[RMDB]
RNA sequence: GGGAACGACUCGAGUAGAGUCGAAAACCUCUCGAGCUCCUCCUUUCUUCUUCUUGCAUCGAUCCACUUUCCGAGUUGCUCUUCUCUCCCCCUCCGGGGUCUCCUCGAAUCGGGCUGGCUCAUCCUCAAACGUAUAAGUUCGCUUAUACGAAAAGAAACAACAACAACAAC
Reactivity to 2A3 in 0.01 (KOAc 150mM, MgCl2 10mM, bicine 150mM(pH8.5), 24C), signal-to-noise 9, nucleotides 027 to 129: c000c000u020c010u010c020g040a020g010c040u020c000c000u010c010c000u060u050u040c010u050u000c010u030u010c000u030u090g020c020a080u030c030g090a060u020c030c010a070c030u040u070u030c020c020g030a040g070u030u040g040c020u010c000u090u020c030u010c010u020c000c000c000c000c000u020c010c010g010g000g000g010u020c020u020c000c010u020c020g020a010a010u040c020g000g000g010c020u010g010g000c010u010c010a070u040c010c010u050c020a080a070a040
Reactivity to DMS in 0.01 (KOAc 150mM, MgCl2 10mM, bicine 150mM(pH8.5), 24C), signal-to-noise 9, nucleotides 027 to 129: c040c020u000c030u010c060g030a090g020c070u010c020c030u000c030c030u010u030u010c060u010u000c020u020u020c040u030u040g030c090a040u010c060g030a150u020c020c060a070c030u020u020u000c040c030g000a130g020u040u030g000c010u000c030u000u000c030u020c020u000c020c010c010c020c020u000c030c030g000g010g000g020u010c010u000c000c010u030c010g000a110a050u030c060g000g000g000c070u000g010g040c010u020c060a080u010c030c020u010c070a090a100a150